[RMDB]
Source: RMDB library OK2TST, as collected in RNAgym. An RNA of 177 nucleotides, treated with 2A3 and DMS and read out base by base. The reactions ran in a buffer of 150 mM KOAc, 10 mM MgCl2 and 150 mM bicine (pH 8.5), at 24 C.
RNA sequence: GGGAACGACUCGAGUAGAGUCGAAAAAGCUGGUCCUUCAGGCUUCCCCGGGCUUCAAGCUGUGCUGACAGCAGCACUGGGGACCCUCCAGCCUCCGGGUGCAGCCAGGUGCCAGAGGUGGUCUCCACAUCAUCUGAAUAUUCGUAUUCAGAUGAUGAAAAGAAACAACAACAACAAC
Reactivity to 2A3 in 0.01 (KOAc 150mM, MgCl2 10mM, bicine 150mM(pH8.5), 24C), signal-to-noise 8, nucleotides 027 to 126: a000g030c010u020g010g010u070c030c000u070u130c120a040g010g000c000u050u040c010c000c010c000g030g010g000c020u180u160c180a120a050g020c030u020g010u050g060c080u160g090a090c020a100g100c010a010g020c060a160c080u030g000g000g010g040a030c020c010c010u040c020c010a030g010c000c010u040c030c020g090g010g010u090g020c020a020g030c030c010a040g040g020u050g030c010c010a010g010a020g020g020u050g010g030u010c020u020c000c000a020
Reactivity to DMS in 0.01 (KOAc 150mM, MgCl2 10mM, bicine 150mM(pH8.5), 24C), signal-to-noise 9, nucleotides 027 to 126: a090g010c020u000g010g010u000c070c020u000u010c170a100g020g010c040u000u000c020c010c000c030g010g000g000c080u000u010c210a070a120g010c040u000g010u000g010c100u000g010a130c170a120g020c020a040g000c030a080c050u000g000g000g000g000a120c220c030c040u010c040c040a100g010c050c040u000c030c030g010g000g020u000g010c060a050g010c040c060a070g010g010u000g000c010c010a080g000a060g000g010u000g010g010u000c020u000c010c070a230